Chemical mapping of a 177-nucleotide RNA with DMS and 2A3. For 2A3 the reverse transcriptase was SuperScript II with manganese.
[RMDB]
RNA sequence: GGGAACGACUCGAGUAGAGUCGAAAAUCUAUCACCAGCCCAUGUUUACGACACGAAUGGGCUGUUGCAAAUUACGUAUAGCUCUUGCAACAUCGUGUCGAAACGUUCCCAAGCUAUACGGCACAAACGUUACAGUAAGAUUCGUCUUACUGUAACGAAAAGAAACAACAACAACAAC
Reactivity to DMS in 0.01 (KOAc 150mM, MgCl2 10mM, bicine 150mM(pH8.5), 24C), signal-to-noise 9, nucleotides 027 to 126: u000c070u000a110u010c060a120c090c020a040g000c010c010c010a150u010g010u000u010u010a150c020g010a020c010a020c010g010a050a070u000g010g010g020c070u000g010u000u000g000c100a040a040a120u010u010a070c010g010u000a010u000a010g010c010u000c170u000u000g000c080a030a030c050a030u000c020g020u000g010u000c010g010a060a070a220c050g010u000u000c000c000c000a160a030g000c000u000a000u000a010c000g010g010c220a090c210a050a050a100
Reactivity to 2A3 in 0.01 (KOAc 150mM, MgCl2 10mM, bicine 150mM(pH8.5), 24C), signal-to-noise 9, nucleotides 027 to 126: u010c010u020a140u110c040a020c100c010a010g020c000c010c000a030u070g100u080u160u090a070c020g010a000c010a000c020g040a070a070u110g050g020g000c020u010g000u000u010g000c010a010a040a110u210u120a090c010g000u000a000u010a010g000c010u030c030u150u100g050c040a040a020c000a080u030c010g000u010g010u010c010g030a130a090a010c030g010u000u000c000c000c000a000a000g000c000u000a000u000a000c000g010g000c070a110c020a070a170a000